[RMDB]
RNA sequence: GGGAACGACUCGAGUAGAGUCGAAAAUAAAACUCAGGGCGACAAAGAGAGCAGGGUUCGAGGCUUCAGUUCAUGGGGCCUGGAAGGCUGUUUUACGUGUGGGUCAGACUCAACGGCCGGAGGCCAACUGACAAGUGAAUUUCGAUUCACUUGUCAGAAAAGAAACAACAACAACAAC
Reactivity to DMS in 0.01 (KOAc 150mM, MgCl2 10mM, bicine 150mM(pH8.5), 24C), signal-to-noise 4, nucleotides 027 to 126: u040a050a060a070a090c050u000c030a080g020g000g010c040g020a050c090a050a110a120g010a080g000a030g000c010a040g000g000g020u010u020c050g000a040g010g020c010u010u020c010a040g030u020u040c250a080u010g020g010g000g010c030c020u010g000g010a030a060g000g010c050u000g010u000u010u020u000a110c140g000u010g010u010g000g000g000u010c070a090g000a300c050u010c050a060a070c110g010g030c000c010g010g020a070g000g000c040c050a060a170
Reactivity to 2A3 in 0.01 (KOAc 150mM, MgCl2 10mM, bicine 150mM(pH8.5), 24C), signal-to-noise 5, nucleotides 027 to 126: u060a000a000a020a010c020u040c040a030g020g020g020c010g020a080c070a030a150a010g110a020g000a010g020c000a010g020g090g140u020u040c040g120a000g000g020c010u010u000c000a060g050u070u070c050a080u130g000g000g000g000c000c010u010g010g040a020a000g130g010c000u000g030u040u030u040u070a050c040g030u040g030u080g080g030g000u060c050a010g010a080c020u030c080a040a040c020g020g020c020c030g070g040a030g010g010c000c000a010a060
Structure probing data (DMS and 2A3) for a 177-nucleotide construct. Values cover nucleotides 27 to 126. The reactions ran in a buffer of 150 mM KOAc, 10 mM MgCl2 and 150 mM bicine (pH 8.5), at 24 C. It was measured as part of the RMDB libraries RFM100 and RFMREP.